[RMDB]
RNA sequence: GGGAACGACUCGAGUAGAGUCGAAAAAUACUGAGUCCUCUUCCAUGCAGGUCACUCGUGAGGAGUUUAUGAACUACUACUGUGGAUUAAGUGCCUCCAUUGAUCAUGAUGCGUACUUUGACCUCAUGAUGAGGAAUGCCUGGAAGCUGUGAUUGCCUGGUGCUUUAAUGUUCGCAUUAAAGCACCAAAAAGAAACAACAACAACAAC
Reactivity to 2A3 in 0.01 (KOAc 150mM, MgCl2 10mM, bicine 150mM(pH8.5), 24C), signal-to-noise 4, nucleotides 027 to 156: a000u260a040c130u090g030a010g030u000c000c000u020c000u030u010c030c000a030u010g000c030a030g010g150u050c030a020c100u000c040g040u060g030a000g030g010a030g020u080u160u120a190u150g150a060a030c030u050a020c030u030a030c110u170g050u100g100g000a040u150u070a090a020g030u020g060c000c020u070c060c020a080u110u190g070a120u230c040a030u080g050a000u040g050c060g050u010a050c050u110u060u130g070a060c000c000u000c000a030u050g020a060u060g000a010g000g040a000a000u000g000c010c000u000g020g010a010a000g030c130u010g080u120g050a050u070u120g070c010c010
Reactivity to DMS in 0.01 (KOAc 150mM, MgCl2 10mM, bicine 150mM(pH8.5), 24C), signal-to-noise 1, nucleotides 027 to 156: a120u010a160c020u010g000a110g030u000c010c030u020c030u000u000c060c010a030u010g000c010a020g000g010u010c030a070c080u000c040g040u010g020a070g030g010a120g020u000u000u000a130u010g000a130a100c070u010a100c040u010a060c120u000g020u000g010g030a190u000u010a050a050g050u010g000c020c040u030c010c000a120u010u010g020a140u000c170a100u010g020a190u000g000c050g000u000a050c080u000u000u000g010a090c010c010u000c010a040u000g010a070u000g010a090g000g000a090a030u000g010c020c020u020g000g030a070a110g000c050u010g040u000g010a080u000u000g010c050c070
An RNA of 207 nucleotides, treated with 2A3 and DMS and read out base by base. For 2A3 the reverse transcriptase was SuperScript II with manganese. DMS adducts were read by reverse transcription with MarathonRT. The DMS profile rests on 3,225 reads. It was measured as part of the RMDB library OK3TST.